[RMDB]
This 177-nucleotide RNA was probed chemically with 2A3 and DMS. Source: RMDB library OK2TST, as collected in RNAgym. For 2A3 the reverse transcriptase was SuperScript II with manganese. Reactivities are given for positions 27 through 126.
RNA sequence: GGGAACGACUCGAGUAGAGUCGAAAAAAUGACAAAGAAAAGUUGGCAUCUGGUGUUACCAAGGACUUAAUUCGUGUCUCUGUUGGUAUCGAAUUUAUUGAUGACAUUAUUGCAGACUUCCAGCAAAUCGAGGGUAUUUAUUCGUAAAUACCCUCGAAAAAGAAACAACAACAACAAC
Reactivity to 2A3 in 0.01 (KOAc 150mM, MgCl2 10mM, bicine 150mM(pH8.5), 24C), signal-to-noise 1, nucleotides 027 to 126: a010a020u190g040a030c090a050a130a040g140a050a160a030a010g030u020u020g040g000c050a040u010c040u030g010g020u020g020u030u040a000c040c000a010a010g020g020a020c010u070u080a090a030u080u030c020g010u010g050u010c010u010c050u120g270u250u190g030g000u000a060u130c000g010a020a020u070u040u120a100u140u020g030a060u050g020a010c010a020u060u100a070u070u140g000c010a000g000a010c020u060u010c000c000a050g000c030a050a040a150
Reactivity to DMS in 0.01 (KOAc 150mM, MgCl2 10mM, bicine 150mM(pH8.5), 24C), signal-to-noise 3, nucleotides 027 to 126: a050a100u000g010a140c120a080a090a110g000a090a090a100a100g020u010u000g000g020c140a100u010c120u020g020g020u000g000u000u000a040c020c000a030a040g000g000a080c200u000u000a040a060u000u000c030g020u000g030u000c030u000c160u000g010u000u020g010g010u000a040u010c020g030a030a020u000u000u000a090u010u000g000a040u010g010a020c030a010u000u000a060u020u000g000c020a070g000a030c080u000u000c050c030a140g020c130a040a060a080